[RMDB]
RNA sequence: GGGAACGACUCGAGUAGAGUCGAAAAGAUAUGGACUAGUCCACCGACGUCGAUGAAAUCGGAAACGAUGGAGACGUCCGGUGGAGCUAGUCCUAAGUCAAAACACAGUAAGUUCGCUUACUGUGAAUCCGUAAGGAGAGUUCGCUCUCCUUACGGAAAAAGAAACAACAACAACAAC
Reactivity to DMS in 0.01 (KOAc 150mM, MgCl2 10mM, bicine 150mM(pH8.5), 24C), signal-to-noise 2, nucleotides 027 to 126: g010a040u010a300u010g000g000a020c010u000a030g010u000c010c000a000c000c000g030a010c000g010u000c010g000a140u050g000a080a110a020u000c010g010g010a170a100a170c020g010a020u000g010g000a040g000a010c000g020u000c050c100g020g010u010g010g010a020g030c010u000a030g000u000c000c000u000a010a040g000u000c050a060a120a100a220c000a000c000a000g000u000a000a010g000u010u030c260g000c000u000u000a000c010u010g000u000g010a050a070
Reactivity to 2A3 in 0.01 (KOAc 150mM, MgCl2 10mM, bicine 150mM(pH8.5), 24C), signal-to-noise 2, nucleotides 027 to 126: g040a000u050a060u180g000g000a000c000u000a000g060u000c000c000a000c030c000g010a010c010g000u000c020g030a300u060g030a020a030a010u010c010g000g010a080a060a040c000g010a010u000g000g020a030g000a000c030g010u010c110c050g000g010u020g020g000a000g010c000u000a060g000u000c000c000u000a010a000g010u010c020a000a020a100a070c010a000c010a000g010u010a010a000g010u040u170c270g040c200u000u000a000c000u000g010u010g000a000a080